[RMDB]
RNA sequence: GGGAACGACUCGAGUAGAGUCGAAAACAAUCCUGCCUUGGCCUCUCAAAGCGCUGGGAUUACAGACAUGAACCACUGUGCCUGGCCUCUGUUUUAUAUAUUGUAUCUAGGAAGGGACCGAUUUAUAUAAGGUGUCAUUUGAGGUUGGGCAAUGAGAAGUUUUAAAUACUUUCGAGUAUUUAAAACUAAAAGAAACAACAACAACAAC
Reactivity to 2A3 in 0.01 (KOAc 150mM, MgCl2 10mM, bicine 150mM(pH8.5), 24C), signal-to-noise 2, nucleotides 027 to 156: c030a000a040u040c000c010u000g010c010c000u030u050g040g000c000c000u070c030u050c110a140a120a020g050c100g010c090u090g040g000g010a000u010u170a030c010a030g080a060c050a140u170g060a100a030c020c040a040c070u110g040u020g030c000c000u000g000g020c000c010u020c030u010g050u030u170u030u010a020u000a000u000a040u060u160g040u040a100u040c040u080a070g030g170a100a130g070g020g110a020c040c000g040a070u000u200u010a080u010a030u030a040a010g040g000u020g080u110c020a050u010u050u270g000a000g000g000u000u020g030g010g000c000a000a010u040g010a020g030a080